[RMDB]
RNA sequence: GGGAACGACUCGAGUAGAGUCGAAAAGAUAUGGAUCCUGUAGACAUGCUGAUUGGGUCGGAAACGACCCUGACAGCAACAGCUACUGGAUCCUAAGUCAAAGGUUGUUAGCUUCGGCUAACAACCAGUGUACCUAUAGGUUCGCCUAUAGGUACACAAAAGAAACAACAACAACAAC
Reactivity to DMS in 0.01 (KOAc 150mM, MgCl2 10mM, bicine 150mM(pH8.5), 24C), signal-to-noise 6, nucleotides 027 to 126: g000a020u000a040u010g000g000a010u000c000c000u000g000u000a010g010a020c030a300u010g020c000u000g010a120u000u000g010g000g030u000c000g020g010a010a010a050c000g020a010c000c000c000u000g000a060c010a020g020c000a070a060c280a080g000c000u000a010c010u000g000g000a010u000c000c000u000a000a050g000u000c010a140a150a150g000g000u000u000g000u000u000a000g000c000u000u010c260g030g010c000u000a000a000c000a000a000c000c000a030
Reactivity to 2A3 in 0.01 (KOAc 150mM, MgCl2 10mM, bicine 150mM(pH8.5), 24C), signal-to-noise 6, nucleotides 027 to 126: g010a010u020a010u040g000g000a000u000c010c000u000g010u000a010g020a030c210a300u300g000c000u010g010a150u100u070g020g000g010u000c000g000g000a020a010a010c000g000a010c000c050c000u000g000a010c000a000g010c060a070a040c110a040g000c000u000a000c000u000g000g000a000u000c000c000u000a010a000g010u000c030a140a050a100g000g000u000u010g000u010u010a000g000c020u040u070c300g160g000c000u010a000a010c000a000a000c000c000a010